[RMDB]
RNA sequence: GGGAACGACUCGAGUAGAGUCGAAAAUCAUCUUGAACUUGAUACAAUAUAGUACAGCACUUUGAAAAUGAAUCAUCUGCUAGUUCAGUAUUUUCUAAUUACAAUCACUCCCUCUCAAGGCAGGUAACAGUGAUAUCAUCUUCGGAUGAUAUCACUGAAAAGAAACAACAACAACAAC
Reactivity to 2A3 in 0.01 (KOAc 150mM, MgCl2 10mM, bicine 150mM(pH8.5), 24C), signal-to-noise 2, nucleotides 027 to 126: u070c000a000u020c030u040u100g040a080a040c000u050u080g030a040u090a150c030a080a100u200a040u110a230g050u030a010c020a020g000c030a020c010u010u050u120g060a080a080a110a140u110g080a080a040u030c000a010u010c010u020g000c030u050a000g020u060u020c010a010g070u030a070u010u070u030u000c040u070a090a100u150u070a080c080a060a020u080c020a040c070u050c000c010c000u040c010u010c030a010a040g040g000c020a000g040g000u010a060a000
Reactivity to DMS in 0.01 (KOAc 150mM, MgCl2 10mM, bicine 150mM(pH8.5), 24C), signal-to-noise 2, nucleotides 027 to 126: u020c090a030u000c040u010u020g020a040a120c060u020u000g010a130u000a050c050a090a080u000a080u010a110g020u010a030c070a080g030c020a030c080u010u000u000g010a010a060a100a120u000g000a110a080u000c050a010u000c020u010g000c030u000a050g020u000u000c060a030g020u010a030u000u000u000u000c020u000a050a070u010u000a130c140a050a090u010c070a100c040u010c000c000c000u000c080u010c050a040a040g000g000c100a010g010g000u020a070a100

The record gives the reactivity of an RNA of 177 nucleotides to 2A3 and DMS. 2A3 adducts were read by reverse transcription with SuperScript II with manganese. The data come from the RNA Mapping Database (RMDB), library RFMREP. DMS adducts were read by reverse transcription with MarathonRT. The RNA was probed in 150 mM KOAc, 10 mM MgCl2 and 150 mM bicine (pH 8.5) at 24 C. The DMS profile rests on 1,455 reads.